[RMDB]
RNA sequence: GGGAACGACUCGAGUAGAGUCGAAAAUCAGUUCACUUCGGUGAACUGAAAAAAGGCAGCUAUGAGCUAAAGUGUCAUAGCAAAAGAUCGAAAGAUCAAAAAAAACCAUGGACUUCGGUCCAUGGAACCUGUAGUAGAUCUUCGGAUCUACUACAGGAAAAGAAACAACAACAACAAC
Reactivity to 2A3 in 0.01 (KOAc 150mM, MgCl2 10mM, bicine 150mM(pH8.5), 24C), signal-to-noise 1, nucleotides 027 to 126: u030c000a000g010u000u000c010a000c000u040u090c190g090g000u010g000a000a010c000u010g000a050a000a000a010a000a010g030g000c000a020g000c000u000a000u000g000a000g000c020u100a300a050a070g170u190g020u090c000a000u010a010g000c000a030a020a020a050g000a000u000c000g070a070a020a040g000a020u000c000a010a020a050a000a000a040a020a040c000c000a000u000g000g000a000c000u020u040c290g110g010u000c010c000a000u000g000g000a000a020
Reactivity to DMS in 0.01 (KOAc 150mM, MgCl2 10mM, bicine 150mM(pH8.5), 24C), signal-to-noise 2, nucleotides 027 to 126: u000c000a000g020u000u000c000a000c000u000u010c250g000g000u000g000a000a000c000u010g000a000a030a030a040a090a140g000g000c000a120g000c010u000a000u010g000a020g000c000u020a090a070a250g010u010g010u010c000a000u000a010g000c000a080a020a120a120g000a020u000c010g010a100a050a150g000a020u000c000a000a000a000a060a130a080a060a180c000c000a000u000g000g000a010c010u000u000c250g050g030u000c000c010a000u000g000g010a010a050